[RMDB]
RNA sequence: GGGAACGACUCGAGUAGAGUCGAAAAUACCAUGACUAGCAUGGUACGGAUCCUCUAGCGUACCAUGAGUACAUCGCGAUCCGCGUACUGGUACUCAUGUCUAGGAUCUACGUACGAUCACUAGGUAAUAUGUUCUAACGUUCGCGUUAGAACAUAUAAAAGAAACAACAACAACAAC
Reactivity to 2A3 in 0.01 (KOAc 150mM, MgCl2 10mM, bicine 150mM(pH8.5), 24C), signal-to-noise 8, nucleotides 027 to 126: u130a020c020c010a030u100g130a070c040u020a020g070c020a050u050g150g000u010a000c010g010g010a010u010c020c020u010c120u090a050g060c070g150u090a060c000c000a000u000g000a000g000u010a000c010a050u060c020g000c000g220a300u160c170c110g000c010g040u080a090c130u180g130g000u010a000c000u000c010a010u010g020u010c020u010a010g000g020a000u000c040u100a070c070g020u020a010c020g100a060u060c030a020c100u020a010g030g000u030a060
Reactivity to DMS in 0.01 (KOAc 150mM, MgCl2 10mM, bicine 150mM(pH8.5), 24C), signal-to-noise 9, nucleotides 027 to 126: u010a180c020c010a130u010g020a160c040u000a030g010c300a060u000g000g000u000a000c010g010g000a050u000c010c020u000c150u010a070g030c300g010u010a080c280c030a010u000g000a020g000u000a010c010a110u000c010g000c010g000a140u010c190c090g020c020g010u000a050c230u010g020g010u010a010c000u000c010a010u000g010u000c040u000a030g000g010a010u000c010u010a090c080g020u000a010c030g000a050u000c140a090c010u000a010g010g010u010a090